[RMDB]
Chemical mapping of a 177-nucleotide RNA with DMS and 2A3. For 2A3 the reverse transcriptase was SuperScript II with manganese. Conditions: 150 mM KOAc, 10 mM MgCl2 and 150 mM bicine (pH 8.5), 24 C.
RNA sequence: GGGAACGACUCGAGUAGAGUCGAAAAGGGAAAAGCGAAUUUCUGCCUUAUAAACACCGGAAUACAGACCAUUAGCGCCCGAUUUCGAAUAGGUAAAUCCCUACUUUCCAUGACAUAAAUAAAGGACGCAUUGUUAUAGCUUCGGCUAUAACAAUGCAAAAGAAACAACAACAACAAC
Reactivity to DMS in 0.01 (KOAc 150mM, MgCl2 10mM, bicine 150mM(pH8.5), 24C), signal-to-noise 1, nucleotides 027 to 126: g000g010g050a050a110a080a060g020c160g000a000a080u000u000u000c130u000g010c000c020u000u010a090u030a050a120a080c230a000c050c040g000g010a050a030u000a020c140a150g000a040c040c030a070u000u000a030g000c130g000c030c030c080g030a070u000u000u000c070g000a080a180u020a100g030g000u020a040a040a000u050c040c010c000u020a040c160u000u030u000c020c050a080u030g000a030c140a100u060a000a020a060u020a070a120a050g030g000a100c170
Reactivity to 2A3 in 0.01 (KOAc 150mM, MgCl2 10mM, bicine 150mM(pH8.5), 24C), signal-to-noise 4, nucleotides 027 to 126: g030g000g010a020a010a040a000g060c080g080a090a110u020u050u050c020u030g060c000c000u080u100a130u170a090a090a010c080a050c090c040g000g020a030a020u100a070c050a020g080a050c000c060a060u050u060a030g010c000g010c060c010c020g020a020u000u040u080c010g010a030a030u020a120g010g010u080a090a050a110u030c010c010c000u040a070c020u040u000u000c010c020a070u080g050a060c020a100u230a060a160a010u190a120a080a050g090g000a020c070